[RMDB]
RNA sequence: GGGAACGACUCGAGUAGAGUCGAAAACUUUUGAAGCAAGCAUUAUGUAUGCAGGUAUUUUAAUCGAUACUAACGCUUUUAUUUAUCGUACAAGUUCUAGAACUUUUGAAGUAGCUUCCAAAUUAAAGUACAAUAAUGCUUUCGAGCAUUAUUGUACAAAAGAAACAACAACAACAAC
Reactivity to 2A3 in 0.01 (KOAc 150mM, MgCl2 10mM, bicine 150mM(pH8.5), 24C), signal-to-noise 4, nucleotides 027 to 126: c020u090u100u040u120g030a000a000g000c010a050a000g000c010a040u020u080a140u300g090u040a020u050g090c040a050g090g000u030a080u020u160u030u080a070a020u110c020g010a000u010a010c010u030a090a040c050g010c000u060u120u080u030a120u050u170u050a120u130c020g000u030a050c040a130a020g030u040u040c020u140a060g040a180a110c010u010u060u050u210g030a040a030g020u030a020g000c000u020u000c050c050a060a070a190u130u190a160a130a030
Reactivity to DMS in 0.01 (KOAc 150mM, MgCl2 10mM, bicine 150mM(pH8.5), 24C), signal-to-noise 2, nucleotides 027 to 126: c040u000u000u000u000g020a020a030g040c070a200a150g020c000a060u000u010a070u030g010u000a030u010g000c060a250g000g000u010a010u010u010u000u000a090a090u000c120g010a020u000a020c000u000a040a080c140g010c010u000u000u000u000a050u010u030u010a050u010c090g010u000a050c150a030a050g000u010u000c080u020a170g000a040a080c010u000u000u000u010g010a030a060g010u000a070g000c070u000u000c010c090a060a080a120u010u020a020a030a130